[RMDB]
An RNA of 207 nucleotides, treated with 2A3 and read out base by base. Conditions: 150 mM KOAc, 10 mM MgCl2 and 150 mM bicine (pH 8.5), 24 C. The data come from the RNA Mapping Database (RMDB), library OK3TST.

RNA sequence: GGGAACGACUCGAGUAGAGUCGAAAAGGAACAAGAUCGACAUCGAACCCAGCGUGGCCGGGCUGGAGGAGACCGCCGUGCUCGACCUGAUCAGCCCGCCGGGCGGUGCGCCGGUGCUUUCCGCUCUCGGCGACAUCGGUGGUUUCCGCCACGAGCGCUGCUGUGGCGUUUUCGAACGCCACAGCAGAAAAGAAACAACAACAACAAC
Reactivity to 2A3 in 0.01 (KOAc 150mM, MgCl2 10mM, bicine 150mM(pH8.5), 24C), signal-to-noise 1, nucleotides 027 to 156: g080g010a120a040c080a100a110g050a190u090c040g030a040c020a170u050c020g070a100a090c020c010c010a000g020c050g050u070g030g060c120c040g000g010g000c010u090g080g110a050g000g000a030g030a010c020c000g060c060c040g090u120g050c040u050c020g210a300c000c030u090g040a110u050c050a020g010c000c020c020g020c010c030g000g020g000c040g000g010u050g000c000g000c010c000g010g020u030g000c100u090u120u020c030c050g070c030u000c030u110c030g020g010c020g030a040c000a030u070c010g000g000u030g020g000u030u080u030c010c020g030c010c010a050c110g060a060g030c050g000